The data come from the RNA Mapping Database (RMDB), library OK2TRN. An RNA of 177 nucleotides, treated with 2A3 and DMS and read out base by base. The reactions ran in a buffer of 150 mM KOAc, 10 mM MgCl2 and 150 mM bicine (pH 8.5), at 24 C. For DMS the reverse transcriptase was MarathonRT. Values cover nucleotides 27 to 126.

RNA sequence: GGGAACGACUCGAGUAGAGUCGAAAAGGGAGGAUUGUUUGAGCUCAAAAGUCUGAGACGAGCCUGGGCAACAUGGUGAGAUUUCGUCUCUAUUAAAAAUCAAAGGCCGGGCGCGGUGGCUCACGCCCAACUUAUUUUUCUUCGGAAAAAUAAGUUGAAAAGAAACAACAACAACAAC
Reactivity to 2A3 in 0.01 (KOAc 150mM, MgCl2 10mM, bicine 150mM(pH8.5), 24C), signal-to-noise 2, nucleotides 027 to 126: g000g000g010a050g020g010a040u000u070g080u120u090u150g010a010g000c000u030c080a060a140a050a050g070u040c060u050g030a030g010a030c010g000a000g000c030c020u050g030g040g020c050a110a020c000a140u070g030g010u050g070a130g010a090u070u110u050c060g040u000c000u000c020u010a050u050u100a100a170a050a000a040u110c050a130a080a020g040g060c040c030g040g050g020c000g010c000g060g070u040g040g000c010u030c040a020c060g000c030c000
Reactivity to DMS in 0.01 (KOAc 150mM, MgCl2 10mM, bicine 150mM(pH8.5), 24C), signal-to-noise 4, nucleotides 027 to 126: g030g020g010a080g010g000a100u000u000g010u000u000u000g010a110g000c040u010c050a060a090a100a120g010u010c100u000g020a070g000a050c020g020a050g010c050c020u000g020g010g010c060a060a070c090a070u000g010g020u000g010a080g000a110u000u010u000c060g010u000c010u000c020u010a100u010u000a010a050a050a100a080u010c060a050a140a160g000g000c070c080g020g010g010c030g020c030g000g010u010g010g000c030u000c060a050c110g000c060c070